[RMDB]
RNA sequence: GGGAACGACUCGAGUAGAGUCGAAAAGUGCGCACACCGGCGCGGCGGCCUCCGGUGACGCGGUGACCGCGCCUAUGCAGGGCACCGUAGUUAAGUUCGCGGUCGAAGAAGGGCAAGAGGUCGUGGCCUCGUGGCUCCCAUUCGUGGGAGCCACGAGAAAAGAAACAACAACAACAAC
Reactivity to DMS in 0.01 (KOAc 150mM, MgCl2 10mM, bicine 150mM(pH8.5), 24C), signal-to-noise 1, nucleotides 027 to 126: g000u040g010c000g000c030a110c130a040c020c000g010g000c300g050c000g020g020c000g000g000c000c000u000c050c040g030g000u030g000a160c040g010c110g030g010u000g020a110c000c040g030c050g010c150c290u010a160u110g000c000a160g000g000g010c030a010c030c070g000u000a020g030u090u000a040a070g040u060u000c060g060c000g020g000u010c050g040a000a050g000a100a040g020g010g000c140a160a110g000a080g010g010u000c060g040u050g000g000c010
Reactivity to 2A3 in 0.01 (KOAc 150mM, MgCl2 10mM, bicine 150mM(pH8.5), 24C), signal-to-noise 1, nucleotides 027 to 126: g020u040g030c010g000c040a010c000a010c050c010g000g000c010g040c000g010g000c000g000g030c000c020u030c010c010g000g030u060g000a040c040g000c040g030g000u030g000a060c010c010g100c030g040c000c060u200a170u300g070c070a160g020g000g000c010a000c000c000g080u280a260g030u140u060a080a000g000u060u040c050g000c030g010g100u040c120g040a120a040g040a010a000g070g030g000c010a030a030g020a010g050g000u000c000g000u040g090g010c010
An RNA of 177 nucleotides, treated with DMS and 2A3 and read out base by base. Source: RMDB library OK1LIB, as collected in RNAgym. DMS adducts were read by reverse transcription with MarathonRT. Conditions: 150 mM KOAc, 10 mM MgCl2 and 150 mM bicine (pH 8.5), 24 C. For 2A3 the reverse transcriptase was SuperScript II with manganese.